[RMDB]
RNA sequence: GGGAACGACUCGAGUAGAGUCGAAAACAUGUUAACCAGGGUGGUCUCAAACUCCUGACCUCAAGUGAUCCGCCCGCCUUGGCCUUCCAAAGUGCUGGGAUUACAGGCGUGAGCCACUGCGCCCGGCCAUCACCAGAUGUUUCGACAUCUGGUGAUGAAAAGAAACAACAACAACAAC
Reactivity to DMS in 0.01 (KOAc 150mM, MgCl2 10mM, bicine 150mM(pH8.5), 24C), signal-to-noise 2, nucleotides 027 to 126: c110a110u010g010u000u000a100a160c080c030a010g010g010g040u000g000g010u000c020u000c040a080a070a080c090u000c020c000u000g000a060c070c030u000c040a060a020g020u010g000a050u000c040c050g000c050c030c020g000c030c000u000u000g000g000c030c020u000u020c010c030a040a050a050g030u000g010c000u000g000g000g000a060u000u000a040c010a070g010g000c010g010u010g000a090g010c000c000a020c080u000g010c140g000c020c000c000g000g020c030
Reactivity to 2A3 in 0.01 (KOAc 150mM, MgCl2 10mM, bicine 150mM(pH8.5), 24C), signal-to-noise 1, nucleotides 027 to 126: c080a120u140g020u130u160a070a030c060c000a020g070g000g080u040g010g060u020c030u060c080a110a110a070c020u000c010c040u020g130a100c000c030u070c070a090a010g010u010g080a030u040c030c060g010c030c010c000g000c040c020u020u060g010g040c010c000u070u000c000c030a100a050a000g080u070g010c020u020g020g060g000a030u060u170a080c020a030g080g000c000g070u070g040a040g000c040c020a030c060u080g010c050g000c000c000c000g010g020c010